[RMDB]
RNA sequence: GGGAACGACUCGAGUAGAGUCGAAAAUUCUUCCUGGGUGCCGGAAAGCCGACACUGGCCGCAGGACUGGCCGCCGUCGGUGCAGGUCUCGCCGUGGGCUUCGGAGGAACGUCUGGUAUCGGUCAGGUCCAUGACCACCUUUCGAGGUGGUCAUGGAAAAAGAAACAACAACAACAAC
Reactivity to DMS in 0.01 (KOAc 150mM, MgCl2 10mM, bicine 150mM(pH8.5), 24C), signal-to-noise 1, nucleotides 027 to 126: u010u040c110u000u000c010c010u020g010g000g020u010g010c010c020g020g010a100a140a290g010c000c020g030a030c020a120c110u000g050g030c040c020g050c090a170g020g000a120c100u000g010g010c000c010g020c210c160g000u000c020g020g030u020g040c050a050g010g020u000c030u000c060g020c050c050g030u000g030g000g010c040u000u000c080g040g000a130g000g000a060a100c150g010u000c050u020g000g010u000a030u010c040g030g000u010c000a100g010g010